[RMDB]
RNA sequence: GGGAACGACUCGAGUAGAGUCGAAAAAUAGGCUCUCCAACCAAACUCCUACUCAAUACGUCCUCGUCGUACAGAACGGUAACAUGUUUUCCGAACAUCCGCGCUUGGGUAUACGAGUAUACACCUUACAGCACCACUUACUUCGGUAAGUGGUGAACUUCAUGGUUUCGUUCGCGAAACCAUGAAGAAAAGAAACAACAACAACAAC
Reactivity to 2A3 in 0.01 (KOAc 150mM, MgCl2 10mM, bicine 150mM(pH8.5), 24C), signal-to-noise 2, nucleotides 027 to 156: a000u110a010g050g000c000u000c030u030c090c010a020a050c020c030a050a050a040c050u050c030c010u050a050c000u040c040a020a110u070a120c040g060u050c020c020u090c040g080u030c050g000u060a030c030a090g060a070a020c010g000g010u030a070a010c030a130u140g010u030u010u040u060c080c050g010a040a010c000a120u050c030c000g040c000g020c100u000u060g040g000g000u020a040u020a030c050g000a000g070u020a030u030a050c100a070c000c030u170u090a100c100a080g010c010a050c000c000a000c000u000u000a000c000u000u010c060g110g000u010a000a000g000u000g000g000u000g000a000a000
This 207-nucleotide RNA was probed chemically with 2A3. The 2A3 profile rests on 874 reads.